[RMDB]
RNA sequence: GGGAACGACUCGAGUAGAGUCGAAAAGAUAUGGAUGUAUAGACAGGUGUUGAGGGUGUCGGAAACGACACACCAAUGAUGCACCCGAACAUCCUAAGUCAAAGCCCUACAGUUCGCUGUAGGGCAAUCGUAUGCGUAACUUCGGUUACGCAUACGAAAAAGAAACAACAACAACAAC
Reactivity to 2A3 in 0.01 (KOAc 150mM, MgCl2 10mM, bicine 150mM(pH8.5), 24C), signal-to-noise 1, nucleotides 027 to 126: g030a020u080a030u130g010g000a030u010g050u050a200u120a300g130a110c100a040g000g020u020g000u020u040g030a040g000g000g000u020g010u000c020g020g030a040a100a080c020g000a000c000a000c040a120c000c010a030a030u070g030a050u180g020c010a000c000c000c000g000a000a020c000a010u020c000c000u000a180a000g030u050c080a100a090a000g010c000c000c000u010a010c010a000g060u010u170c230g060c200u050g000u010a010g000g000g020c020a020a000
Reactivity to DMS in 0.01 (KOAc 150mM, MgCl2 10mM, bicine 150mM(pH8.5), 24C), signal-to-noise 3, nucleotides 027 to 126: g000a040u020a300u000g000g020a000u010g020u000a140u010a130g020a250c300a040g000g010u000g020u000u000g000a140g010g000g040u000g000u000c000g000g010a090a070a140c000g000a000c000a010c000a050c000c000a100a220u010g010a110u000g010c010a000c010c000c030g000a140a060c000a000u000c000c010u010a010a090g000u000c010a120a100a160g000c000c000c000u000a000c000a010g000u030u010c280g040c000u000g000u000a040g000g000g010c020a000a000